This 177-nucleotide RNA was probed chemically with DMS and 2A3. For DMS the reverse transcriptase was MarathonRT.
RNA sequence: GGGAACGACUCGAGUAGAGUCGAAAAUUGCCGCGACGGAAAAAACGUCCUGGCUGGCUUGCCUGAGCGCGCCGCAGCGCUUAAAAAUGCUCGCGGAACUGAUGCAGUGGGAGGCGACCGAUUGAAGGAAAUAUCCUGCUUUCGAGCAGGAUAUUUCAAAAGAAACAACAACAACAAC
Reactivity to DMS in 0.01 (KOAc 150mM, MgCl2 10mM, bicine 150mM(pH8.5), 24C), signal-to-noise 2, nucleotides 027 to 126: u030u030g010c000c020g010c300g050a000c010g000g000a000a060a060a050a080a130c070g010u000c010c040u010g000g030c040u000g000g020c030u020u010g000c020c000u000g000a130g020c020g000c090g000c040c020g000c000a100g010c000g020c050u000u000a020a060a050a160a230u000g000c050u010c180g000c030g000g000a070a060c130u030g010a060u000g050c040a020g010u000g000g010g000a070g010g000c010g000a120c000c020g000a100u000u030g000a200a130g000
Reactivity to 2A3 in 0.01 (KOAc 150mM, MgCl2 10mM, bicine 150mM(pH8.5), 24C), signal-to-noise 3, nucleotides 027 to 126: u090u060g000c000c000g000c050g000a000c010g040g030a110a030a020a000a000a000c010g020u010c010c010u040g000g000c000u010g030g000c010u030u070g050c000c010u020g050a030g010c020g000c000g010c010c030g000c010a010g000c010g000c000u010u030a000a060a000a000a010u070g000c010u020c080g020c000g010g050a060a030c090u100g090a170u130g030c050a050g070u100g060g020g000a040g000g000c020g010a020c000c020g100a090u040u130g060a080a060g020
Source: RMDB library RFM100, as collected in RNAgym. For 2A3 the reverse transcriptase was SuperScript II with manganese.